[RMDB]
RNA sequence: GGGAACGACUCGAGUAGAGUCGAAAAGAGGUUUAGUAUCAUGUUAUGAAGGUGUGAGUUGCUCCAUUGGCAGCAACAAAGUCGGGAUCAUUAAACAACUCAACAAAGGAUGCACACACAUACCCAAGUAGUACGUAAGGUUCGCCUUACGUACUACAAAAGAAACAACAACAACAAC
Reactivity to 2A3 in 0.01 (KOAc 150mM, MgCl2 10mM, bicine 150mM(pH8.5), 24C), signal-to-noise 5, nucleotides 027 to 126: g120a060g050g020u070u080u120a050g010u040a020u080c040a040u110g060u110u160a120u140g080a110a010g060g010u070g020u010g050a100g010u020u020g010c020u000c010c000a120u060u170g070g000c040a010g000c000a010a020c010a050a100a000g070u040c040g030g000g030a030u030c020a050u060u150a030a030a020c010a010a030c010u050c080a000a070c020a050a130a000g080g010a020u050g010c030a010c000a000c000a000c010a130u090a160c000c000c010a020a030
Reactivity to DMS in 0.01 (KOAc 150mM, MgCl2 10mM, bicine 150mM(pH8.5), 24C), signal-to-noise 5, nucleotides 027 to 126: g010a080g010g030u000u000u010a080g020u000a030u000c040a090u000g010u000u000a110u010g010a130a070g020g020u000g020u010g010a160g000u000u010g010c040u000c040c040a210u010u000g020g030c140a030g010c030a020a020c060a070a050a090g020u000c030g020g010g000a060u010c060a060u000u010a080a040a060c090a040a080c050u000c040a030a030c120a050a070a110g010g000a050u000g000c040a030c080a070c050a060c040a070u000a110c030c010c020a080a120